[RMDB]
RNA sequence: GGGAACGACUCGAGUAGAGUCGAAAAAUACACAAGGUUUUGGAUUGCCGAGCAUCACAACAGUGGCGCUUUCGUCAGCGCGGCCACCGAAAUCUUGAUCGCGCUCGCCGCUGCCCGGACAGGCCGGGGAGCUCUAUCGAUUCGUCGAUAGAGCUCCAAAAGAAACAACAACAACAAC
Reactivity to DMS in 0.01 (KOAc 150mM, MgCl2 10mM, bicine 150mM(pH8.5), 24C), signal-to-noise 2, nucleotides 027 to 126: a070u000a210c150a150c090a030a110g020g000u020u000u000u010g000g000a190u010u000g020c000c010g020a090g030c020a050u000c120a050c150a110a040c300a090g050u010g000g000c020g000c240u000u010u010c110g000u020c090a070g040c050g010c000g000g010c040c110a110c030c010g000a030a030a010u000c040u000u000g000a070u010c050g020c040g010c020u010c080g010c070c000g000c030u000g020c040c000c010g020g040a070c180a080g000g010c020c030g000g000
Reactivity to 2A3 in 0.01 (KOAc 150mM, MgCl2 10mM, bicine 150mM(pH8.5), 24C), signal-to-noise 1, nucleotides 027 to 126: a000u170a010c060a000c000a020a060g000g000u010u060u060u020g130g060a170u110u110g000c000c010g000a020g000c040a020u130c060a020c030a080a190c000a060g040u030g000g010c030g000c000u060u250u180c110g060u110c040a060g000c010g000c030g040g010c010c000a010c000c000g080a040a040a040u040c000u090u060g020a040u090c040g000c020g000c010u080c050g030c060c000g000c060u030g000c000c000c000g000g020a080c070a090g020g000c020c020g060g030